An RNA of 177 nucleotides, treated with 2A3 and DMS and read out base by base. DMS adducts were read by reverse transcription with MarathonRT. The DMS profile rests on 1,477 reads. It was measured as part of the RMDB library OK2TST.

RNA sequence: GGGAACGACUCGAGUAGAGUCGAAAACAUGCCGCUGGGAUCCGCUCUUGGGAUCCGGAUCCACGAUGAAUGGACAGUCACUUAUGCGCGAGACGGCACAAUGGUACUUGACAGGUCCGACUGAAGACGCUAACAUGCAGUUCGCUGCAUGUUAGCGAAAAGAAACAACAACAACAAC
Reactivity to 2A3 in 0.01 (KOAc 150mM, MgCl2 10mM, bicine 150mM(pH8.5), 24C), signal-to-noise 1, nucleotides 027 to 126: c020a070u060g030c010c040g000c040u060g000g000g050a000u020c020c010g040c040u080c060u130u140g160g100g010a030u000c010c030g000g000a010u000c000c000a020c080g090a090u160g050a070a090u080g030g000a010c050a030g030u030c030a030c050u100u090a050u200g030c020g000c030g040a050g070a080c030g040g000c030a010c040a070a070u140g050g000u070a070c010u120u070g080a010c020a060g000g070u080c000c000g020a030c050u060g030a060a020g070a020
Reactivity to DMS in 0.01 (KOAc 150mM, MgCl2 10mM, bicine 150mM(pH8.5), 24C), signal-to-noise 2, nucleotides 027 to 126: c110a140u010g010c020c030g030c060u000g020g020g000a000u000c010c000g000c230u000c110u000u000g010g010g010a040u020c060c000g000g000a040u000c000c010a060c060g000a120u000g050a150a050u020g020g020a110c060a060g000u000c030a050c090u000u000a060u000g030c030g000c050g000a130g000a060c090g010g010c000a060c140a080a060u000g000g010u010a030c020u000u020g020a110c090a070g020g000u000c040c040g010a150c070u000g010a070a100g000a160